[RMDB]
RNA sequence: GGGAACGACUCGAGUAGAGUCGAAAAGUGCGGUUGUGGGGAUAUUGACGUGCUGGUGAGCUCCUUCAAGCUCGAGUGUGCGUCUUGCCACGGCCUUGAAGGAGUUCAGUGGUACAUCAAUGUCCAUAACCGGUAUUUAAUUCGUUAAAUACCGGUUAAAAGAAACAACAACAACAAC
Reactivity to 2A3 in 0.01 (KOAc 150mM, MgCl2 10mM, bicine 150mM(pH8.5), 24C), signal-to-noise 9, nucleotides 027 to 126: g130u090g030c080g030g010u010u010g010u030g040g220g000g000a000u000a010u010u000g010a010c020g000u000g000c010u040g030g280u010g000a000g000c000u000c000c000u010u010c000a010a010g010c030u030c090g070a190g050u080g010u140g010c010g100u300c180u100u300g000c000c000a000c000g010g000c020c000u010u000g000a000a000g000g010a000g010u000u000c000a010g030u000g010g010u020a010c000a000u010c000a000a010u010g000u000c000c000a000u000
Reactivity to DMS in 0.01 (KOAc 150mM, MgCl2 10mM, bicine 150mM(pH8.5), 24C), signal-to-noise 4, nucleotides 027 to 126: g020u000g010c300g000g010u010u020g000u000g000g000g020g010a040u000a000u000u010g000a020c050g020u000g000c000u000g000g010u000g000a010g010c000u000c010c020u000u000c020a000a010g000c030u010c040g010a160g010u010g010u030g040c010g000u030c150u030u030g010c000c010a030c000g000g000c300c020u000u000g000a000a010g000g010a030g000u010u000c000a010g000u000g000g020u000a010c010a060u000c000a000a010u000g000u000c000c000a300u000